This 177-nucleotide RNA was probed chemically with 2A3 and DMS. For DMS, 746 sequencing reads were counted. The RNA was probed in 150 mM KOAc, 10 mM MgCl2 and 150 mM bicine (pH 8.5) at 24 C. For DMS the reverse transcriptase was MarathonRT.
RNA sequence: GGGAACGACUCGAGUAGAGUCGAAAAUUAAUUAAGGAAGGAGUGAUUUCAAUGGCACAAGAUAUCAUUUCAACAAUCGGUGACUUAGUAAAAUGGAUUAUCGACACAGUGAACAAAUUCACUAAAACAAUUCAGUGAUGUUCGCAUCACUGAAUUGAAAAGAAACAACAACAACAAC
Reactivity to 2A3 in 0.01 (KOAc 150mM, MgCl2 10mM, bicine 150mM(pH8.5), 24C), signal-to-noise 1, nucleotides 027 to 126: u040u000a060a000u050u020a080a060g090g000a070a070g000g020a010g020u030g080a000u060u120u000c070a080a100u090g070g000c010a020c000a080a020g020a010u020a010u090c000a030u040u060u040c070a070a060c020a050a110u080c000g000g030u010g020a040c000u090u040a020g010u090a120a060a050a080u070g060g000a090u000u010a030u090c030g040a000c030a000c000a070g000u000g000a040a010c040a050a240a100u120u100c000a040c040u080a030a020a000a060
Reactivity to DMS in 0.01 (KOAc 150mM, MgCl2 10mM, bicine 150mM(pH8.5), 24C), signal-to-noise 1, nucleotides 027 to 126: u000u050a030a110u010u020a020a060g000g010a070a110g020g040a060g020u000g030a080u000u000u000c060a070a110u010g000g000c080a010c080a150a120g000a020u000a010u010c050a030u000u000u000c060a070a160c120a070a070u000c070g010g000u010g020a040c020u010u000a000g000u000a020a050a070a070u040g000g000a140u010u000a030u000c150g000a100c290a040c150a050g010u000g000a030a140c200a030a070a070u000u020c010a000c040u000a050a040a040a110